[RMDB]
RNA sequence: GGGAACGACUCGAGUAGAGUCGAAAAGAGAAAUUCGUAAGUCUCUUUGCUACUUUAAUGACUUUUUCUGGUAAUGUAGAUCUUGAUGCGUUAGCUAGUGAUAUUUUUGACACUCCUAGCGUACUUCGCGUAAAUAGAUGUUCGCAUCUAUUUACGCAAAAGAAACAACAACAACAAC
Reactivity to DMS in 0.01 (KOAc 150mM, MgCl2 10mM, bicine 150mM(pH8.5), 24C), signal-to-noise 8, nucleotides 027 to 126: g010a020g000a030a040a070u010u000c260g010u010a130a190g010u000c010u000c010u000u000u000g010c010u000a010c020u000u000u000a080a100u010g000a100c290u000u010u000u010u000c130u010g010g020u010a040a040u000g000u000a010g000a040u000c010u010u000g010a070u000g010c010g000u000u000a040g010c100u000a010g010u010g010a070u010a050u000u000u010u010u000g010a160c080a030c040u000c300c000u000a010g000c010g010u000a030c120u000u010c300
Reactivity to 2A3 in 0.01 (KOAc 150mM, MgCl2 10mM, bicine 150mM(pH8.5), 24C), signal-to-noise 7, nucleotides 027 to 126: g010a000g000a000a050a020u160u140c080g030u150a060a060g060u000c000u000c000u010u020u020g010c000u020a030c000u080u080u150a140a110u160g090a090c020u120u160u090u180u110c090u140g070g000u070a070a080u060g010u020a020g000a060u010c010u010u110g050a060u060g020c010g020u020u010a010g010c060u010a000g010u020g070a080u030a140u200u150u060u130u210g040a020c010a000c010u020c000c000u000a000g000c010g000u000a030c030u040u110c080